RNA sequence: GGGAACGACUCGAGUAGAGUCGAAAAGGAACUAUGUUCAUGCAUGAAGCCUCCACGUGCUUGUUUCGACGUCCGUAGACGGAUGAGCAUAGUUAAGAGCUGAAGGAGGCACGGCUCAAAAUAAAAACGUUGAUCAACUGUUCGCAGUUGAUCGACGAAAAGAAACAACAACAACAAC
Reactivity to 2A3 in 0.01 (KOAc 150mM, MgCl2 10mM, bicine 150mM(pH8.5), 24C), signal-to-noise 9, nucleotides 027 to 126: g120g010a010a000c000u000a000u010g000u000u000c000a000u020g000c000a000u010g040a090a020g000c000c000u000c000c000a020c010g010u000g000c000u180u160g140u110u250u190c050g030a030c010g010u000c000c020g070u040a030g010a020c010g000g000a000u000g000a000g000c000a000u000a000g000u000u020a070a010g000a000g000c000u010g020a130a030g010g000a000g000g000c010a010c000g000g000c000u000c000a060a070a010a010u190a020a050a010a000a000
Reactivity to DMS in 0.01 (KOAc 150mM, MgCl2 10mM, bicine 150mM(pH8.5), 24C), signal-to-noise 6, nucleotides 027 to 126: g010g010a010a000c000u000a000u000g000u000u000c000a000u000g000c010a010u000g010a070a100g020c000c010u000c000c010a300c010g000u000g000c000u010u040g000u000u020u020c050g000a150c000g010u000c000c120g030u040a050g000a030c000g000g000a000u000g000a010g000c000a000u000a000g000u000u000a040a080g000a000g010c010u000g000a090a120g020g010a020g010g030c000a280c020g000g010c010u000c020a120a040a080a090u060a050a070a120a100a140
The record gives the reactivity of an RNA of 177 nucleotides to 2A3 and DMS. For 2A3, 44,781 sequencing reads were counted. The data come from the RNA Mapping Database (RMDB), library OK1LIB. For DMS the reverse transcriptase was MarathonRT. For DMS, 17,799 sequencing reads were counted. For 2A3 the reverse transcriptase was SuperScript II with manganese.